[RMDB]
RNA sequence: GGGAACGACUCGAGUAGAGUCGAAAAGUAUUGGAUCCUUCUGAAGAUUGUCCAUGUAGAUACGUUGCACACGAAUUUAUACAAGCCAAGUAUGACGAUGAAAAGGCACUCAAUCAAUUAGGACAAACUUAUAUGUCGGUUUCGACCGACAUAUAAGAAAAGAAACAACAACAACAAC
Reactivity to 2A3 in 0.01 (KOAc 150mM, MgCl2 10mM, bicine 150mM(pH8.5), 24C), signal-to-noise 4, nucleotides 027 to 126: g070u060a080u140u210g040g030a070u060c010c000u030u080c060u140g120a130a070g050a150u070u050g020u010c030c010a030u140g030u090a020g030a040u020a070c030g040u040u100g040c050a030c010a000c060g030a050a040u040u100u040a090u030a040c050a010a100g060c030c010a090a010g020u030a030u080g010a020c060g050a060u100g090a040a060a080a000g050g000c020a010c020u040c000a010a080u020c000a020a130u080u090a070g020g000a000c000a010a050a030
Reactivity to DMS in 0.01 (KOAc 150mM, MgCl2 10mM, bicine 150mM(pH8.5), 24C), signal-to-noise 6, nucleotides 027 to 126: g020u000a100u010u010g010g010a090u000c030c030u000u010c060u010g010a130a110g020a110u000u000g010u010c030c030a100u000g020u000a080g010a060u000a040c090g010u010u000g000c070a050c110a070c060g010a110a100u010u000u010a040u010a050c090a070a090g010c090c100a030a080g010u000a020u000g020a040c090g010a090u010g000a050a050a070a150g010g010c030a040c070u000c100a070a050u010c060a040a090u000u000a100g020g020a050c080a040a060a180